Conditions: 150 mM KOAc, 10 mM MgCl2 and 150 mM bicine (pH 8.5), 24 C. An RNA of 177 nucleotides, treated with 2A3 and DMS and read out base by base. In probing experiments dimethyl sulfate is read out at A N1 and C N3, which are open when not base-paired. DMS adducts were read by reverse transcription with MarathonRT.
RNA sequence: GGGAACGACUCGAGUAGAGUCGAAAAUAGCAGACCCUUUAGGAUUGGUUCAAUACCUGAGUUAAUAUGGAAAGUGCUUAGUACCUGCUGACUUGGUAGUAGUGCAAACACUAGUUGUAUGGCCCGCCAAGUUGUUUUCUUUCGAGAAAACAACUUGAAAAGAAACAACAACAACAAC
Reactivity to 2A3 in 0.01 (KOAc 150mM, MgCl2 10mM, bicine 150mM(pH8.5), 24C), signal-to-noise 4, nucleotides 027 to 126: u130a000g020c040a020g020a200c010c020c000u040u100u070a060g010g020a000u010u090g060g050u160u080c070a050a020u060a220c010c020u000g050a030g030u070u120a080a070u110a110u210g100g020a090a110a040g030u020g030c000u050u050a010g010u070a100c000c000u000g010c010u030g020a280c130u130u130g030g000u050a020g020u010a020g040u030g030c020a060a090a020c000a010c030u030a060g000u020u080g040u050a200u100g030g000c020c030c000g000c000
Reactivity to DMS in 0.01 (KOAc 150mM, MgCl2 10mM, bicine 150mM(pH8.5), 24C), signal-to-noise 5, nucleotides 027 to 126: u030a090g020c070a080g010a150c030c020c020u000u000u010a070g010g010a110u000u020g020g010u010u030c090a080a060u010a100c040c030u000g010a060g000u020u020a080a050u010a090u030g000g000a090a060a100g000u000g020c040u000u000a040g020u010a080c050c020u010g000c040u010g000a070c090u010u020g010g010u000a050g020u020a080g020u000g010c140a060a060a080c040a020c040u010a070g000u000u000g020u010a040u010g000g000c000c010c050g000c130